[RMDB]
RNA sequence: GGGAACGACUCGAGUAGAGUCGAAAAAAUGUAAUUGCCAACAACGAUUACGAAUACGCAAUGGCAGCCUAAUUAGGCUUGCCGCACUGAUUGGCUGACGUCAGAUACGCCGACCAGUGACAAACUUAUCCGACUGGCACCCAAAGCCGUCUGUCGCCACUCUGUAUAGGUUCGCCUAUACAGAGUGAAAAGAAACAACAACAACAAC
Reactivity to 2A3 in 0.01 (KOAc 150mM, MgCl2 10mM, bicine 150mM(pH8.5), 24C), signal-to-noise 6, nucleotides 027 to 156: a000a030u200g000u030a020a040u040u000g060c050c060a070a040c040a020a020c120g020a020u020u060a010c030g040a080a070u190a140c120g030c170a080a120u110g000g000c000a000g000c000c000u190a300a300u210u260a050g010g020c000u030u150g000c000c000g000c000a000c000u010g000a010u010u010g010g000c010u010g020a010c050g040u050c010a010g020a060u040a050c040g000c010c010g000a010c020c000a000g000u000g030a050c090a060a080a010c050u100u090a040u100c040c020g050a050c090u060g010g010c020a080c020c030c030a050a030a010g020c020c010g060u030c040u030g050u020c020g020c050
Reactivity to DMS in 0.01 (KOAc 150mM, MgCl2 10mM, bicine 150mM(pH8.5), 24C), signal-to-noise 2, nucleotides 027 to 156: a070a100u000g030u000a010a000u000u000g010c000c010a130a120c060a100a030c000g010a020u000u000a000c050g040a160a060u000a120c150g000c090a050a080u000g010g010c000a050g000c000c000u000a100a200u000u010a070g040g020c000u000u000g040c010c010g050c000a050c050u010g000a050u000u000g030g010c010u020g070a140c090g020u010c100a190g000a230u000a210c210g000c000c000g000a020c000c000a030g040u000g010a060c040a070a070a050c040u000u000a060u000c060c060g020a080c050u000g000g030c030a090c050c020c040a090a120a170g030c050c020g020u040c080u000g020u000c010g000c080